[RMDB]
RNA sequence: GGGAACGACUCGAGUAGAGUCGAAAAAUCUGGAGCAAAUUUCACAAGGGAGUAAAAAUAAGGCAGAAAAUGCGGUUUCGGUGCGCGCUCUUGACCGCCACUGUAUGCCGAUUUCAAUUCAAAUGCCGCUACGUUAUGGACGAAAGCGGAACGCGUGACACAAUGUUCUGUUCGCAGAACAUUGUGUAAAAGAAACAACAACAACAAC
Reactivity to 2A3 in 0.01 (KOAc 150mM, MgCl2 10mM, bicine 150mM(pH8.5), 24C), signal-to-noise 4, nucleotides 027 to 156: a000u060c050u060g040g020a030g010c030a010a080a220u100u160u100c080a070c000a050a040g030g010g020a050g030u110a040a050a040a040a100u130a080a060g020g000c030a020g060a060a050a020a030u170g060c000g010g010u020u040u040c000g000g000u050g000c110g000c000g000c070u060c010u180u140g060a120c020c010g000c010c010a030c010u010g020u100a030u080g000c000c020g000a000u000u110u080c040a020a050u130u050c030a060a060a060u130g040c000c030g010c010u010a010c010g020u040u070a130u300g110g030a020c010g030a130a040a000g000c000g000g030a030a040c100g000c030g070u080g040
Reactivity to DMS in 0.01 (KOAc 150mM, MgCl2 10mM, bicine 150mM(pH8.5), 24C), signal-to-noise 2, nucleotides 027 to 156: a110u010c030u000g030g000a060g030c020a090a070a180u000u010u010c070a060c030a000a080g030g010g000a110g020u000a050a060a070a090a120u000a040a070g040g060c030a140g000a040a020a060a070u000g010c000g020g020u000u000u000c040g030g030u000g000c090g020c040g030c060u010c090u000u010g000a040c080c010g050c000c030a070c050u010g040u010a090u000g010c000c040g030a130u000u000u000c050a030a070u000u000c090a110a030a090u000g010c000c000g030c030u020a050c040g010u010u000a100u000g010g000a100c040g030a060a110a110g010c010g010g000a020a030c050g010c140g030u020g000
This 207-nucleotide RNA was probed chemically with 2A3 and DMS. The data come from the RNA Mapping Database (RMDB), library OK3TST. For 2A3, 2,535 sequencing reads were counted. The DMS profile rests on 2,806 reads. The RNA was probed in 150 mM KOAc, 10 mM MgCl2 and 150 mM bicine (pH 8.5) at 24 C.